[RMDB]
RNA sequence: GGGAACGACUCGAGUAGAGUCGAAAAGAUAUGGAGGUAACGCAUCGAUCUAUUGAUCGGAAACGAUCACGGUAGGGAGCAGUUACCUCCUAAGUCAAAUCAUUCCUCUGUUCGCAGAGGAAUGAAACGCUAAUAAGAGCUUCGGCUCUUAUUAGCGAAAAGAAACAACAACAACAAC
Reactivity to 2A3 in 0.01 (KOAc 150mM, MgCl2 10mM, bicine 150mM(pH8.5), 24C), signal-to-noise 2, nucleotides 027 to 126: g010a030u040a020u110g000g000a010g010g000u000a010a020c010g000c060a140u300c130g150a130u030c080u040a120u080u100g030a000u020c000g000g030a040a000a000c010g010a000u010c050a020c130g130g040u060a080g020g130g180a140g070c140a110g040u000u010a000c000c000u020c000c000u000a010a000g010u010c000a000a030a110u020c000a000u000u050c010c010u000c010u000g040u030u110c300g020c090a000g000a000g000g020a010a000u000g000a010a010a000
Reactivity to DMS in 0.01 (KOAc 150mM, MgCl2 10mM, bicine 150mM(pH8.5), 24C), signal-to-noise 2, nucleotides 027 to 126: g000a040u000a250u000g000g000a020g020g000u000a000a010c030g010c020a200u010c100g000a130u010c020u000a070u000u000g010a000u000c010g050g010a040a060a250c000g010a010u000c000a030c300g010g010u000a020g000g020g000a040g030c040a130g030u000u000a000c000c000u000c010c010u000a000a040g020u000c020a070a050a150u020c020a010u000u000c010c010u000c000u000g010u010u020c250g010c000a000g010a000g000g020a000a000u000g000a010a040a060
Record summary:
This 177-nucleotide RNA was probed chemically with 2A3 and DMS. Conditions: 150 mM KOAc, 10 mM MgCl2 and 150 mM bicine (pH 8.5), 24 C. The DMS profile rests on 1,275 reads.